[RMDB]
Chemical mapping of a 207-nucleotide RNA with 2A3 and DMS. Conditions: 150 mM KOAc, 10 mM MgCl2 and 150 mM bicine (pH 8.5), 24 C. For 2A3, 756 sequencing reads were counted.

RNA sequence: GGGAACGACUCGAGUAGAGUCGAAAAAAUAAUGAUGAUUUACUGCGUAAAGAUACGCGAUUAAUGCCUAUUUCCAAAGCAUAUGACGUGAAGGCUCAGUUUCCCUCACACGGAUUUGCCGCUUUUGAAUAGAUGCUUGCUCCACCCGACGUCAGAAUCCACCAAAAUGAUUCGUCAUUUUGGUGGAAAAAGAAACAACAACAACAAC
Reactivity to 2A3 in 0.01 (KOAc 150mM, MgCl2 10mM, bicine 150mM(pH8.5), 24C), signal-to-noise 2, nucleotides 027 to 156: a000a000u240a020a060u050g120a040u050g020a000u110u120u150a090c070u110g000c010g030u020a070a090a140g090a220u130a060c030g020c030g050a030u120u150a050a060u060g000c010c000u090a100u060u060u000c030c000a000a020a020g000c020a040u100a100u250g050a120c050g020u050g080a030a000g020g000c020u030c110a050g000u010u120u090c020c000c000u040c000a080c040a010c040g060g000a020u010u000u100g030c010c030g050c040u100u090u050u080g060a020a040u030a160g070a070u140g000c030u020u010g000c000u010c010c030a020c010c000c000g040a060c020g110u000c030a000g010a070a010
Reactivity to DMS in 0.01 (KOAc 150mM, MgCl2 10mM, bicine 150mM(pH8.5), 24C), signal-to-noise 1, nucleotides 027 to 156: a030a080u000a060a090u010g020a050u020g010a260u020u000u010a080c040u000g040c030g020u000a040a070a110g000a300u030a030c000g030c010g020a080u000u000a070a060u010g010c060c000u000a080u010u000u010c060c030a090a070a070g020c010a110u000a110u010g010a100c030g050u000g030a100a130g010g030c170u000c010a120g010u000u010u000c020c000c000u000c080a060c020a090c030g020g010a100u000u010u010g010c000c030g010c020u000u010u000u010g030a080a120u010a090g020a130u000g000c070u000u000g000c030u010c020c040a090c050c020c030g000a030c070g010u010c030a110g000a110a190

Reactivities are rounded to 0.1 and cut off at 0 and 3.
Reactivities are given for positions 27 through 156.